[RMDB]
RNA sequence: GGGAACGACUCGAGUAGAGUCGAAAAUUAAAAUGAUCGCAGCUGAAAUGGCGGACGCUAUGGUCUCCCUGACGGGAGGGACUCCAGUCCAAAGAGUCGACUAUCCCACCAAAAGUUUGCCAAAAAACCUACCACAUUGAUUCGUCAAUGUGGUAGGAAAAGAAACAACAACAACAAC
Reactivity to DMS in 0.01 (KOAc 150mM, MgCl2 10mM, bicine 150mM(pH8.5), 24C), signal-to-noise 2, nucleotides 027 to 126: u000u010a090a050a080a080u040g000a090u000c060g030c100a030g040c030u000g010a080a130a090u010g010g030c100g000g010a040c040g000c080u010a080u000g010g010u000c050u000c000c000c000u010g030a110c290g000g010g030a040g040g000g000a000c010u000c030c030a110g000u020c100c190a080a120a190g000a000g010u000c010g000a150c110u000a120u000c000c010c000a120c120c080a040a060a030a160g000u010u000u000g010c020c040a000a050a050a080a080a080
Reactivity to 2A3 in 0.01 (KOAc 150mM, MgCl2 10mM, bicine 150mM(pH8.5), 24C), signal-to-noise 1, nucleotides 027 to 126: u050u020a020a010a020a120u100g030a040u050c080g000c070a040g000c050u080g090a070a090a040u120g030g000c030g000g000a000c010g000c050u040a040u140g050g000u020c020u000c000c010c020u060g090a040c100g010g020g000a010g040g000g000a000c000u030c010c000a050g170u000c010c020a100a110a020g010a000g020u020c020g010a000c000u020a120u080c010c000c000a020c020c000a100a080a000a000g010u020u110u120g010c000c000a020a150a000a040a020a020